[RMDB]
Chemical mapping of a 177-nucleotide RNA with 2A3 and DMS. 2A3 adducts were read by reverse transcription with SuperScript II with manganese. High 2A3 reactivity points to a flexible backbone, as in loops and unpaired stretches. DMS adducts were read by reverse transcription with MarathonRT.
RNA sequence: GGGAACGACUCGAGUAGAGUCGAAAAGAAAGAAAGAAUUUAUCACUUGAAUGUUGACCGAAUAUGGAUGAAAAGUUGUUUUCUGUUUCCUUUCCUCCACAUUCGGUCAAUGUUCCAGUGAUGAGAACGCGGUAAAAAAAUUCGUUUUUUUACCGCGAAAAGAAACAACAACAACAAC
Reactivity to 2A3 in 0.01 (KOAc 150mM, MgCl2 10mM, bicine 150mM(pH8.5), 24C), signal-to-noise 6, nucleotides 027 to 126: g060a010a060a010g140a060a110a010g080a110a120u090u090u040a010u020c000a000c000u000u000g000a000a000u010g010u020u000g000a000c010c000g000a000a000u020a020u020g010g010a010u020g060a030a020a020a060g050u080u060g130u100u180u130u120c130u120g180u060u100u070c020c000u000u010u010c010c020u020c000c000a000c000a010u000u000c000g000g000u010c000a000a000u000g000u010u000c000c000a000g000u000g000a000u000g000a000g010a030a020
Reactivity to DMS in 0.01 (KOAc 150mM, MgCl2 10mM, bicine 150mM(pH8.5), 24C), signal-to-noise 2, nucleotides 027 to 126: g010a200a110a060g000a040a120a080g000a100a070u010u000u010a020u000c000a000c000u000u000g010a010a000u000g020u000u000g010a000c010c010g000a020a000u000a030u000g000g000a030u000g000a020a020a060a090g010u000u000g000u000u010u020u000c080u020g000u000u000u020c000c030u000u000u000c010c050u000c000c000a000c030a010u000u000c000g000g000u010c010a010a000u000g000u000u000c000c050a020g030u000g000a000u010g000a070g030a120a180